[RMDB]
This 177-nucleotide RNA was probed chemically with 2A3 and DMS. For 2A3, 4,278 sequencing reads were counted. DMS adducts were read by reverse transcription with MarathonRT. The data come from the RNA Mapping Database (RMDB), library OK2TST. Conditions: 150 mM KOAc, 10 mM MgCl2 and 150 mM bicine (pH 8.5), 24 C.

RNA sequence: GGGAACGACUCGAGUAGAGUCGAAAAGACGAGAUUGCCAAGAGCUAUUUCGCAUUGGAAAGGGACGAACCUUUGUACUACAUCGCCAAUUGUGCUCACAGCAAGAACCAAAACCAAAAACCGAAGAGUCUGUUAACAAAUUCGUUUGUUAACAGACAAAAGAAACAACAACAACAAC
Reactivity to 2A3 in 0.01 (KOAc 150mM, MgCl2 10mM, bicine 150mM(pH8.5), 24C), signal-to-noise 3, nucleotides 027 to 126: g080a010c020g000a010g010a050u030u050g000c010c010a170a040g050a010g000c000u020a040u020u080u050c030g000c030a020u030u090g050g050a070a040a070g050g000g030a060c080g070a050a120c000c010u030u030u110g050u030a060c030u020a030c040a070u080c040g020c030c000a040a080u040u080g040u070g010c020u020c030a040c020a010g000c020a030a040g020a030a010c020c010a000a020a000a070c050c020a060a070a150a030a020c050c030g120a080a080g050a030
Reactivity to DMS in 0.01 (KOAc 150mM, MgCl2 10mM, bicine 150mM(pH8.5), 24C), signal-to-noise 4, nucleotides 027 to 126: g020a140c070g000a050g010a090u000u010g030c000c020a130a200g010a120g010c010u010a060u000u000u000c130g010c060a110u000u010g000g010a040a030a100g000g010g020a090c160g020a070a110c080c020u000u010u000g010u010a060c070u010a080c110a040u000c090g000c030c080a050a060u000u020g010u000g020c050u010c040a080c140a050g030c040a050a080g000a090a100c080c020a040a020a070a170c060c040a050a040a070a100a080c100c080g010a090a070g030a230